Chemical mapping of a 177-nucleotide RNA with 2A3 and DMS.

RNA sequence: GGGAACGACUCGAGUAGAGUCGAAAAGGAAACUGCCGGUAAUACCUCAUGAUCUCUCCGGAGCAAAGCCUCGGCGCCUCGGGAUCGGCGAUCUUCCUAUCAGGUCGUUGGCGGGGUAAUGGCCCACGGCAUUACUAGAGUUCGCUCUAGUAAUGCCAAAAGAAACAACAACAACAAC
Reactivity to 2A3 in 0.01 (KOAc 150mM, MgCl2 10mM, bicine 150mM(pH8.5), 24C), signal-to-noise 1, nucleotides 027 to 126: g000g000a030a140a000c060u090g040c000c000g060g010u110a140a050u110a160c000c000u070c010a110u150g060a160u060c050u000c000u050c020c040g050g000a010g000c070a180a020a000g000c010c000u010c050g060g080c000g040c050c000u000c010g110g000g040a150u060c000g000g000c010g020a020u000c000u080u040c030c030u060a100u160c090a010g000g020u000c000g010u060u030g050g040c050g020g010g000g050u020a050a050u080g120g000c000c000c000a020c030
Reactivity to DMS in 0.01 (KOAc 150mM, MgCl2 10mM, bicine 150mM(pH8.5), 24C), signal-to-noise 1, nucleotides 027 to 126: g000g010a130a030a150c110u000g000c050c010g010g010u020a140a140u010a100c080c000u010c060a100u030g010a030u000c010u000c040u020c030c060g000g000a040g020c080a100a070a170g000c030c030u000c040g000g030c130g020c050c030u010c070g030g020g020a050u000c000g000g030c000g020a050u010c050u000u020c060c040u000a100u010c160a010g000g000u000c050g020u000u020g000g000c090g010g000g000g000u020a030a160u010g020g000c000c000c040a150c150
The reactions ran in a buffer of 150 mM KOAc, 10 mM MgCl2 and 150 mM bicine (pH 8.5), at 24 C. The data come from the RNA Mapping Database (RMDB), library RFMREP. For DMS the reverse transcriptase was MarathonRT.